Structure probing data (DMS and 2A3) for a 177-nucleotide construct. Values cover nucleotides 27 to 126. The reactions ran in a buffer of 150 mM KOAc, 10 mM MgCl2 and 150 mM bicine (pH 8.5), at 24 C. The data come from the RNA Mapping Database (RMDB), library TTRDES.
RNA sequence: GGGAACGACUCGAGUAGAGUCGAAAAGAUAUGGAUGUGCUACUUAUCUUUGAUCGACUAUCGGAAACGAUAGUCGGGAGAUAACUAGUUUCGACAUCCUAAGUCAAAACACCCGUUCGCGGGUGAAGAUAGUUAACAGGUUCGCCUGUUAACUAUCAAAAGAAACAACAACAACAAC
Reactivity to DMS in 0.01 (KOAc 150mM, MgCl2 10mM, bicine 150mM(pH8.5), 24C), signal-to-noise 6, nucleotides 027 to 126: g000a010u000a130u010g000g000a020u000g020u010g010c010u000a010c120u000u000a000u000c000u000u000u030g010a070u020c000g010a020c010u000a000u000c000g010g000a050a040a090c000g010a030u000a000g010u000c000g000g000g000a000g010a020u000a000a010c100u000a010g010u010u010u010c260g010a110c060a010u000c000c020u000a020a150g000u000c010a110a110a140a300c020a010c000c000c010g030u010u010c230g020c010g000g000g010u000g000a050a090
Reactivity to 2A3 in 0.01 (KOAc 150mM, MgCl2 10mM, bicine 150mM(pH8.5), 24C), signal-to-noise 7, nucleotides 027 to 126: g010a010u030a020u080g000g000a010u010g040u080g050c010u020a050c020u030u010a010u020c000u300u300u050g040a070u060c000g000a000c000u000a000u000c010g000g020a030a010a010c010g000a000u000a000g010u000c000g000g000g000a020g010a000u010a010a030c050u020a040g100u120u280u300c240g160a060c030a010u000c000c000u000a050a000g000u010c020a010a000a160a210c010a010c000c020c010g010u070u070c300g010c040g050g000g000u010g010a020a010